Structure probing data (DMS) for a 177-nucleotide construct.
DMS (dimethyl sulfate) methylates the pairing face of unpaired adenines and cytosines.
For DMS the reverse transcriptase was MarathonRT.
Reactivities are rounded to 0.1 and cut off at 0 and 3.
RNA sequence: GGGAACGACUCGAGUAGAGUCGAAAAUCGAUCGGCAGGGCGCCGGCAUCUUCCAUGGUGUUGUAGAAGAUCGGUGCGAUCUUGGUGCCGAAGCAGAAGCCGCCGGCACGCUUGUUCGGCACGAACAGGAUAUUACGGCGUUCGCGCCGUAAUAUCCAAAAGAAACAACAACAACAAC
Reactivity to DMS in 0.01 (KOAc 150mM, MgCl2 10mM, bicine 150mM(pH8.5), 24C), signal-to-noise 1, nucleotides 027 to 126: u000c090g010a100u000c050g000g030c070a120g000g020g010c060g000c030c000g000g030c090a040u000c040u000u000c000c040a060u010g020g000u000g010u020u000g020u010a160g010a040a030g010a010u000c020g020g000u000g020c050g010a020u000c060u000u010g020g020u000g000c000c020g020a080a120g000c140a140g010a060a040g020c040c080g020c110c100g030g020c020a090c100g000c000u000u030g030u000u000c020g000g010c070a060c040g000a080a040c120a120